[RMDB]
RNA sequence: GGGAACGACUCGAGUAGAGUCGAAAAAUAAAGCACAUGAAGCACAUGAAGCACGGCAAGCAGUACAAGCACUACAAGCAGUACAAGCAGAUGAAGCAGUAGAAGCAGCCGAAGCACAUGAAAAAAAACUCUCAUUAAGUUUCGACUUAAUGAGAGUAAAAGAAACAACAACAACAAC
Reactivity to DMS in 0.01 (KOAc 150mM, MgCl2 10mM, bicine 150mM(pH8.5), 24C), signal-to-noise 3, nucleotides 027 to 126: a050u000a040a060a100g000c020a050c090a060u000g000a080a100g000c060a070c050a080u000g020a110a080g020c040a070c130g000g040c080a050a080g010c020a030g000u010a020c060a040a050g000c040a080c060u000a050c120a060a060g030c030a080g020u010a040c090a040a050g010c000a030g000a080u000g000a070a110g010c020a050g000u010a060g000a070a060g000c030a040g000c030c030g010a050a080g010c010a040c050a050u010g010a010a000a000a100a020a080a090
Reactivity to 2A3 in 0.01 (KOAc 150mM, MgCl2 10mM, bicine 150mM(pH8.5), 24C), signal-to-noise 2, nucleotides 027 to 126: a000u160a020a050a020g040c010a010c010a050u090g100a060a020g000c020a010c010a070u060g040a100a020g020c020a000c040g020g000c040a030a030g010c010a010g000u040a040c010a120a080g010c020a020c070u160a020c050a070a050g030c010a000g030u090a030c000a030a060g000c010a000g020a090u070g030a080a020g010c020a000g020u100a030g030a100a000g000c030a000g030c000c020g010a020a010g030c010a000c000a040u060g080a100a000a000a000a000a000a030